[RMDB]
RNA sequence: GGGAACGACUCGAGUAGAGUCGAAAAGCGUACUACUGCCUGUGGUGAGCUUGGACCAGCUCGAACUACCCUUGUCCCAAAUAGGACAAGGGCGAGCUGCUAGCUCACCCAGGCAGUAUCGCAAACCUAAACACGCAGUUCGCUGCGUGUUUAGGAACGAAGUCCUUUACUUCGGUAAAGGACUUCGAAAAGAAACAACAACAACAAC
Reactivity to 2A3 in 0.01 (KOAc 150mM, MgCl2 10mM, bicine 150mM(pH8.5), 24C), signal-to-noise 1, nucleotides 027 to 156: g010c000g030u030a050c060u000a010c000u010g000c000c000u220g080u300g080g000u000g000a000g000c020u070u110g000g100a150c110c010a000g010c000u000c000g070a130a170c170u080a070c290c000c030u010u000g000u000c080c000c010a220a300a120u250a130g050g000a010c010a000a000g000g050g000c010g000a000g000c010u000g080c000u000a000g000c000u010c030a000c000c000c000a010g000g010c000a000g000u000a000u010c020g020c010a010a010a010c000c000u020a000a000a000c000a000c000g010c000a030g030u070u060c220g200c100u000g000c000g000u000g010u000u000u010a000g010g000a000a000
Source: RMDB library RNAMAK, as collected in RNAgym. An RNA of 207 nucleotides, treated with 2A3 and read out base by base. The 2A3 profile rests on 624 reads. The reactions ran in a buffer of 150 mM KOAc, 10 mM MgCl2 and 150 mM bicine (pH 8.5), at 24 C.